Structure probing data (DMS and 2A3) for a 207-nucleotide construct.

RNA sequence: GGGAACGACUCGAGUAGAGUCGAAAAACGAGGUACGCCUCGAAAAUAUGACCGGUCUCAUAGCCUCUAGCACACAGAGGUCGCGUGGGUUCAACUCCCCCCCUUUUCCGAGGGUAUCGGAAACCAAAAAACACAAUUUGGUUCGCCAAAUUGUGAAUCGUUGAUAUAAGUUCGCUUAUAUCAACGAAAAAGAAACAACAACAACAAC
Reactivity to DMS in 0.01 (KOAc 150mM, MgCl2 10mM, bicine 150mM(pH8.5), 24C), signal-to-noise 2, nucleotides 027 to 156: a110c030g010a070g000g010u000a110c270g040c020c000u010c020g010a060a070a100a120u020a050u000g020a130c040c010g010g000u000c000u000c000a040u000a080g010c000c010u000c020u010a120g010c060a150c110a120c120a100g000a040g030g000u000c050g030c190g030u000g020g020g010u000u010c110a070a160c100u010c000c030c000c000c010c000c010u010u000u000u000c010c000g000a020g000g020g000u000a040u000c020g000g030a030a020a050c170c030a000a040a080a070a130a140c000a010c000a010a010u000u000u000g020g010u010u010c300g010c000c020a000a030a010u000u000g030u000g000a030a060
Reactivity to 2A3 in 0.01 (KOAc 150mM, MgCl2 10mM, bicine 150mM(pH8.5), 24C), signal-to-noise 5, nucleotides 027 to 156: a000c000g000a000g010g010u050a030c180g090c020c010u000c010g030a120a060a010a030u170a110u120g040a040c050c050g050g040u020c000u010c020a040u050a030g010c000c000u020c010u040a090g080c110a060c010a010c020a170g000a000g010g000u030c010g030c030g030u060g010g020g000u100u190c060a090a110c080u030c000c000c000c000c000c000c020u020u070u000u000c000c000g000a000g010g010g010u070a010u010c000g000g000a000a000a000c010c020a030a040a030a040a070a000c010a000c000a010a000u000u000u000g020g000u030u040c090g020c040c000a000a000a010u000u010g000u000g000a000a040

Description
As a SHAPE reagent, 2A3 marks flexible, mostly unpaired nucleotides at the ribose 2'-OH. The reactions ran in a buffer of 150 mM KOAc, 10 mM MgCl2 and 150 mM bicine (pH 8.5), at 24 C. It was measured as part of the RMDB library M2RFPK.